[RMDB]
RNA sequence: GGGAACGACUCGAGUAGAGUCGAAAAUGAGUGGAUUUUGGAUGCUAAGAGCAGGAAGCAAUGUUGGGUUUUUGGCAGCCCUAUUCCCGGAGCCAAGUGUCACUUAAAUAAGGCAGCUACACUCUGUCUUCUCUAAGACUGCCUGGUCCCUGCCUUCAUUCCACUCGGUAUUCGUACCGAGUGGAAUAAAAGAAACAACAACAACAAC
Reactivity to DMS in 0.01 (KOAc 150mM, MgCl2 10mM, bicine 150mM(pH8.5), 24C), signal-to-noise 1, nucleotides 027 to 156: u000g020a060g000u010g030g010a120u000u000u010u000g100g010a090u010g020c040u010a070a050g000a120g010c040a070g010g050a050a110g040c110a050a060u000g010u010u000g000g000g000u000u010u000u000u010g010g060c000a130g000c010c010c040u020a120u000u000c010c020c010g030g020a170g000c030c030a010a080g010u000g000u000c040a130c060u000u010a020a050a120u010a050a030g020g010c000a030g050c090u000a070c140a040c100u010c000u000g020u000c040u000u000c090u010c020u000a030a050g000a100c030u000g000c060c010u000g000g000u000c010c000c020u000g000c010c040u000u000c060
Reactivity to 2A3 in 0.01 (KOAc 150mM, MgCl2 10mM, bicine 150mM(pH8.5), 24C), signal-to-noise 1, nucleotides 027 to 156: u100g020a000g030u030g030g050a060u120u090u150u100g060g000a000u050g010c010u070a080a050g030a060g060c020a020g080g080a100a020g000c060a030a070u130g030u060u100g040g000g010u020u040u020u040u070g060g010c020a020g090c030c000c000u060a060u020u060c000c030c000g030g000a020g000c000c030a070a030g070u060g040u010c010a030c040u070u160a060a040a090u200a050a050g010g000c000a020g010c050u150a050c060a030c080u050c050u010g050u000c000u070u020c020u000c010u060a070a030g040a080c040u020g030c020c000u000g010g020u080c020c000c020u050g000c000c000u050u080c020
Structure probing data (DMS and 2A3) for a 207-nucleotide construct. For DMS, 2,986 sequencing reads were counted. Conditions: 150 mM KOAc, 10 mM MgCl2 and 150 mM bicine (pH 8.5), 24 C. For 2A3 the reverse transcriptase was SuperScript II with manganese. For DMS the reverse transcriptase was MarathonRT. Values are in units of 0.01, from 0 to 300, in steps of 10.